[RMDB]
RNA sequence: GGGAACGACUCGAGUAGAGUCGAAAAAGCGUUCACUCAGGAGCAAUAUCCCUUUGCGACCGAAGUGAUGGAUGUUGCCGACGCUGCGCAGGUCGCGCAAGUGUGUCAGCGACUGUUAGCUGAAACGAACCCAGUGCAGGUUCGCCUGCACUGGGUUAAAAGAAACAACAACAACAAC
Reactivity to 2A3 in 0.01 (KOAc 150mM, MgCl2 10mM, bicine 150mM(pH8.5), 24C), signal-to-noise 1, nucleotides 027 to 126: a010g000c010g050u010u030c010a010c010u020c000a020g010g000a090g000c000a050a000u000a090u140c010c010c000u010u070u020g080c050g170a220c020c010g080a100a010g010u030g040a060u080g110g110a080u130g010u000u010g070c010c020g020a000c010g000c030u050g040c000g000c060a030g110g200u300c050g000c000g000c070a110a110g110u120g020u070g000u210c020a000g010c020g040a010c010u040g120u220u050a030g000c030u010g030a080a020a020c060g020
Reactivity to DMS in 0.01 (KOAc 150mM, MgCl2 10mM, bicine 150mM(pH8.5), 24C), signal-to-noise 3, nucleotides 027 to 126: a000g020c010g010u000u000c010a040c040u000c010a200g010g040a300g000c010a030a000u000a090u010c020c020c090u000u000u000g020c010g000a150c040c020g000a150a040g030u000g010a050u010g000g000a070u000g010u020u000g000c000c000g000a040c000g000c010u000g000c030g000c040a100g000g020u010c180g010c010g010c090a110a090g040u010g020u000g010u000c000a000g010c000g000a010c020u000g010u000u010a120g000c040u000g010a060a080a110c170g000
Notes
Conditions: 150 mM KOAc, 10 mM MgCl2 and 150 mM bicine (pH 8.5), 24 C. Chemical mapping of a 177-nucleotide RNA with 2A3 and DMS. For 2A3 the reverse transcriptase was SuperScript II with manganese.